An RNA of 177 nucleotides, treated with DMS and 2A3 and read out base by base. It was measured as part of the RMDB library TTRDEL. Conditions: 150 mM KOAc, 10 mM MgCl2 and 150 mM bicine (pH 8.5), 24 C. Reactivities are given for positions 27 through 126.
RNA sequence: GGGAACGACUCGAGUAGAGUCGAAAAGAUAUGGAGCCAGUGAUGACCGUACUGAGAAAUACCAUCGGAAACGAUGGGUGUACGCAAGCAGGCUCCUAAGUCAAACUUCACUGUUCGCAGUGAAGAAUCAUUAUGGCACGUUCGCGUGCCAUAAUGAAAAAGAAACAACAACAACAAC
Reactivity to DMS in 0.01 (KOAc 150mM, MgCl2 10mM, bicine 150mM(pH8.5), 24C), signal-to-noise 2, nucleotides 027 to 126: g000a050u000a300u010g000g020a020g050c000c000a060g040u000g000a130u000g000a120c300c010g020u000a000c010u000g020a080g000a050a160a050u010a110c010c000a000u000c000g040g000a120a030a110c010g000a010u010g000g010g000u000g000u000a000c020g050c060a070a200g000c010a050g010g010c010u000c000c030u000a020a040g010u000c010a080a050a170c010u000u000c000a020c010u010g000u000u010c210g030c000a010g010u010g010a020a000g020a090a130
Reactivity to 2A3 in 0.01 (KOAc 150mM, MgCl2 10mM, bicine 150mM(pH8.5), 24C), signal-to-noise 2, nucleotides 027 to 126: g050a020u040a020u180g000g000a000g010c020c030a040g080u040g180a300u180g000a060c170c000g010u000a020c010u030g030a000g090a130a290a180u300a100c000c000a000u000c000g000g050a090a060a020c010g010a000u010g010g000g000u030g000u010a000c010g000c020a040a190g010c010a040g010g030c000u020c010c000u000a050a010g000u000c020a000a040a110c000u020u000c000a000c000u000g080u070u080c300g080c190a000g010u000g010a000a000g000a020a100